RNA sequence: GGGAACGACUCGAGUAGAGUCGAAAACAAGAAGAUAUGACACGUGAAAGAUGGCGCAUCGACAUGCAUGCCGCCUUGGAUAAGAUAGAGACCCAAUCAUCAUUCGACGUAGUCGAACUUGUCAGACUUCGUGACAUGGCAGCUGGACAUGCGUACACACUUGCAGAUACUUCGGUAUCUGCAAGUGAAAAGAAACAACAACAACAAC
Reactivity to 2A3 in 0.01 (KOAc 150mM, MgCl2 10mM, bicine 150mM(pH8.5), 24C), signal-to-noise 4, nucleotides 027 to 156: c040a020a070g100a050a050g040a100u140a040u220g060a040c060a030c190g100u100g110a130a080a030g100a100u060g030g010c000g000c020a000u040c050g060a070c030a060u150g030c020a050u020g020c050c020g040c040c030u050u090g070g000a060u030a130a030g030a040u100a090g070a010g030a030c040c020c000a030a030u060c010a010u020c000a050u070u060c000g020a000c090g050u150a090g000u010c010g030a040a080c040u090u090g040u050c040a020g010a060c000u040u030c030g060u030g030a030c020a060u060g030g000c010a030g020c020u020g000g010a030c010a020u040g020c020g000u120a040c070a000
Reactivity to DMS in 0.01 (KOAc 150mM, MgCl2 10mM, bicine 150mM(pH8.5), 24C), signal-to-noise 2, nucleotides 027 to 156: c040a090a230g010a060a140g010a140u000a130u000g000a100c060a100c050g020u010g010a110a070a110g050a130u010g010g040c010g000c050a060u000c050g040a100c080a080u010g000c040a060u000g070c000c020g010c020c030u000u000g010g010a120u000a030a090g020a160u000a030g010a300g000a060c050c030c050a090a190u010c050a070u020c090a300u000u010c020g030a060c000g020u010a070g050u010c000g030a050a110c060u000u010g010u000c010a110g010a190c110u000u000c020g010u000g010a040c020a070u020g000g000c000a030g010c000u010g030g010a170c050a060u000g000c030g000u000a090c090a090